RNA sequence: GGGAACGACUCGAGUAGAGUCGAAAACUGCCGCUGCUGAUGUGUUCAAUGGCGUUUCACGAGCUGUGGCGACUCGAGAGUGAGCAUGUCUACUAUCUACGGUGAAAUAGUUCACCGCAGACUGCAGCAUUAUGCCCUCGUUCGCGAGGGCAUAAUGAAAAGAAACAACAACAACAAC
Reactivity to DMS in 0.01 (KOAc 150mM, MgCl2 10mM, bicine 150mM(pH8.5), 24C), signal-to-noise 4, nucleotides 027 to 126: c080u030g010c090c060g020c050u000g000c010u010g000a060u020g020u000g020u000u010c040a050a110u020g010g010c120g000u010u000u030c020a080c050g010a070g000c080u010g020u010g000g010c060g000a080c030u000c070g010a120g000a150g000u010g000a090g010c010a010u010g000u000c000u020a100c100u040a230u010c010u000a050c000g010g000u000g000a010a070a220u030a140g020u000u000c000a000c000c000g020c050a000g000a020c130u010g010c000a020g010
Reactivity to 2A3 in 0.01 (KOAc 150mM, MgCl2 10mM, bicine 150mM(pH8.5), 24C), signal-to-noise 7, nucleotides 027 to 126: c020u060g050c020c020g030c030u030g000c010u020g020a090u050g070u010g020u050u040c050a100a110u180g130g010c050g030u060u100u130c030a020c040g100a050g040c090u080g050u060g030g000c030g050a080c020u010c090g130a090g020a030g130u120g020a000g010c020a030u100g030u050c010u040a070c010u030a060u070c010u010a030c010g010g000u020g020a040a050a080u260a120g160u050u010c000a000c000c000g000c000a000g000a020c060u070g010c020a010g010